[RMDB]
RNA sequence: GGGAACGACUCGAGUAGAGUCGAAAAUCGUGGCCCAGUGAUCUGCGUGGAUCUGGAUCUAUAGUACGGAUCAGCGCACAUAUGGCCGGCCGACUGGCCGAUCUGCGCGGCCUGAUCCGCUAGGCGCGCUCCCAAGGUCCUUCGGGACCUUGGGAGCAAAAGAAACAACAACAACAAC
Reactivity to DMS in 0.01 (KOAc 150mM, MgCl2 10mM, bicine 150mM(pH8.5), 24C), signal-to-noise 1, nucleotides 027 to 126: u000c040g040u010g000g010c010c010c050a080g020u000g000a060u000c030u040g010c110g020u000g000g020a070u000c030u000g020g000a090u000c090u020a090u010a120g020u000a090c020g000g000a020u000c000a050g020c070g020c000a000c020a090u030a130u010g040g000c060c010g010g030c010c000g010a220c270u000g020g010c000c010g000a000u000c030u000g020c080g040c010g020g000c090c000u010g000a000u000c010c020g030c020u000a040g010g020c100g000c050
Reactivity to 2A3 in 0.01 (KOAc 150mM, MgCl2 10mM, bicine 150mM(pH8.5), 24C), signal-to-noise 1, nucleotides 027 to 126: u100c040g040u030g220g040c010c000c040a050g080u150g020a040u000c000u030g080c030g110u200g000g040a060u030c080u080g060g010a010u040c010u010a120u100a070g090u100a030c070g050g000a010u010c000a000g020c040g000c100a010c050a100u110a140u130g060g000c010c070g010g000c020c010g260a300c150u170g000g050c000c030g010a010u010c040u080g000c110g030c170g120g000c010c000u000g000a040u040c030c060g010c060u010a030g020g000c010g010c010